[RMDB]
Conditions: 150 mM KOAc, 10 mM MgCl2 and 150 mM bicine (pH 8.5), 24 C. The record gives the reactivity of an RNA of 177 nucleotides to DMS and 2A3. It was measured as part of the RMDB library OK2TST. The 2A3 profile rests on 9,761 reads. Reactivities are given for positions 27 through 126.
RNA sequence: GGGAACGACUCGAGUAGAGUCGAAAACUGGCACAUGAAUGAAUGCAUACAUCGGUGAGUGAGGAAGUUCAGACGUAAUGACAGAAGGACAUAAACUCUGUGCCCAGAUGUGAGGUGGAAGGUAUCAAUGGUCAUAAUGAUUCGUCAUUAUGACCAUAAAAGAAACAACAACAACAAC
Reactivity to DMS in 0.01 (KOAc 150mM, MgCl2 10mM, bicine 150mM(pH8.5), 24C), signal-to-noise 9, nucleotides 027 to 126: c050u000g010g000c040a050c050a060u000g000a090a070u010g000a110a070u010g010c090a090u010a090c100a050u000c060g010g010u000g000a090g020u000g010a100g000g000a070a090g010u000u000c050a060g000a140c130g010u000a080a060u010g010a070c060a050g010a160a090g000g010a060c080a040u000a060a070a100c090u000c030u000g010u010g000c050c020c030a070g010a070u000g010u010g000a070g010g010u000g000g000a050a040g000g010u010a060u000c110a070
Reactivity to 2A3 in 0.01 (KOAc 150mM, MgCl2 10mM, bicine 150mM(pH8.5), 24C), signal-to-noise 7, nucleotides 027 to 126: c010u010g050g020c020a020c020a090u120g080a110a020u080g050a060a020u110g100c020a020u040a090c020a050u060c030g060g010u050g010a050g030u070g020a020g050g040a050a050g030u060u030c020a020g030a040c050g050u100a100a100u120g060a020c020a030g070a060a040g060g020a020c010a070u120a050a100a030c030u000c000u030g030u060g010c000c020c000a040g010a060u080g050u050g060a040g000g030u040g020g060a090a030g040g000u080a040u130c070a040